[RMDB]
Chemical mapping of a 177-nucleotide RNA with 2A3 and DMS.
2A3 adducts were read by reverse transcription with SuperScript II with manganese.
Reactivities are given for positions 27 through 126.

RNA sequence: GGGAACGACUCGAGUAGAGUCGAAAAUAACAUCGUAGUGUAAGACGAAAAGUCAACGUCGCUUGCCUGCAGGACCACCAAAGGAAUACGCUUCGGUAACUACUCGAGAUCCCAAGCGAUAACACAAUAUUAGGAAGUAGUUCGCUACUUCCUAAUAAAAAGAAACAACAACAACAAC
Reactivity to 2A3 in 0.01 (KOAc 150mM, MgCl2 10mM, bicine 150mM(pH8.5), 24C), signal-to-noise 6, nucleotides 027 to 126: u060a010a010c020a050u060c060g030u040a060g030u000g020u130a060a060g060a070c040g070a110a090a050a020g120u070c090a060a050c060g020u010c010g000c070u030u080g030c000c010u020g000c040a050g010g060a030c020c020a040c020c020a130a090a050g060g020a060a070u070a060c050g000c050u000u010c000g010g030u040a130a110c000u010a010c000u010c000g000a010g010a030u000c010c000c000a010a000g040c030g140a110u100a170a050c060a010c030a120a070
Reactivity to DMS in 0.01 (KOAc 150mM, MgCl2 10mM, bicine 150mM(pH8.5), 24C), signal-to-noise 6, nucleotides 027 to 126: u010a080a140c100a060u000c070g010u000a050g020u010g020u000a060a100g010a070c020g000a060a050a070a130g010u000c080a080a080c100g010u000c030g000c030u000u000g000c030c030u020g010c080a070g000g000a070c050c070a040c040c060a040a100a060g010g000a090a100u010a060c080g010c090u000u000c030g010g000u000a090a120c000u000a000c000u000c000g010a010g000a130u000c000c010c000a060a110g000c120g010a060u010a050a050c090a040c150a070a090